[RMDB]
RNA sequence: GGGAACGACUCGAGUAGAGUCGAAAAACGAAAACUACGCACUCGCAGCUUAAUAACCUGCGCUGAGCCCUUCUCCCCCAGCUUGCGUGUGUCCUAGGGAAUUGGAAGGUCAUCCUUCACAGGAUCGUCUAGGUAAUCCCUUUCGAGGGAUUACCAAGUAACCAGACAUAUUCGUAUGUCUGGUUACAAAAGAAACAACAACAACAAC
Reactivity to 2A3 in 0.01 (KOAc 150mM, MgCl2 10mM, bicine 150mM(pH8.5), 24C), signal-to-noise 2, nucleotides 027 to 156: a020c060g060a030a020a010a040c080u160a060c010g020c020a070c020u010c020g000c000a000g010c040u040u060a090a040u060a070a050c000c030u020g040c000g030c110u110g010a050g020c010c000c030u170u100c090u110c020c000c000c000c000a010g000c020u060u060g010c020g000u020g010u000g020u050c000c000u020a040g100g000g020a080a040u120u050g070g010a010a050g060g020u080c020a040u050c030c000u000u080c050a070c020a080g000g000a020u030c040g050u060c090u060a040g000g000u000a000a000u010c000c000c000u040u060u020c080g080a010g000g000g000a000u010u000a000c000c000a000a000
Reactivity to DMS in 0.01 (KOAc 150mM, MgCl2 10mM, bicine 150mM(pH8.5), 24C), signal-to-noise 2, nucleotides 027 to 156: a130c040g010a080a040a080a130c040u000a060c050g000c050a100c060u010c030g010c030a050g020c020u010u000a130a150u000a100a090c230c010u000g010c000g010c130u000g000a090g020c020c040c050u000u020c050u000c010c010c000c020c030a100g010c040u000u010g010c050g010u000g010u000g000u000c020c020u020a090g010g050g020a080a130u000u000g020g000a100a090g020g020u000c080a080u000c020c010u010u020c150a120c060a060g020g010a070u000c070g020u000c040u000a030g000g040u000a010a010u010c010c000c000u000u000u000c250g010a050g040g010g000a020u000u000a010c000c000a000a130